[RMDB]
RNA sequence: GGGAACGACUCGAGUAGAGUCGAAAAGAUAUGGAUUCGUGUAUGGAGUCUGUCGGAAACGACAAGGACUAUGAAGUACCGAAUCCUAAGUCAAACAUCACAUGUCGGUUCGCCGACAUGUGAUGAACGAAGACUGUUACUUCGGUAACAGUCUUCGAAAAGAAACAACAACAACAAC
Reactivity to 2A3 in 0.01 (KOAc 150mM, MgCl2 10mM, bicine 150mM(pH8.5), 24C), signal-to-noise 2, nucleotides 027 to 126: g030a020u060a000u110g000g000a000u000u010c040g000u040g000u300a050u090g080g020a010g000u030c000u010g010u000c010g020g000a080a010a010c030g020a020c090a100a130g180g000a010c000u040a260u300g120a180a020g010u020a000c010c000g010a010a010u000c000c000u000a080a000g020u020c040a080a070a040c010a000u000c000a000c000a000u010g000u000c030g030g120u060u130c300g070c120c010g000a000c000a000u000g000u010g010a000u000g000a000a000
Reactivity to DMS in 0.01 (KOAc 150mM, MgCl2 10mM, bicine 150mM(pH8.5), 24C), signal-to-noise 1, nucleotides 027 to 126: g020a040u010a280u000g000g000a010u000u000c000g020u000g020u020a010u000g010g000a010g010u000c000u000g020u000c010g010g000a080a070a180c000g010a010c010a060a120g030g000a010c000u010a160u040g010a090a150g000u010a010c000c000g010a040a000u000c000c000u000a000a020g010u000c010a180a090a190c000a020u000c000a000c010a000u000g010u000c000g000g000u000u020c300g010c010c000g010a000c020a000u000g000u000g000a010u000g040a030a190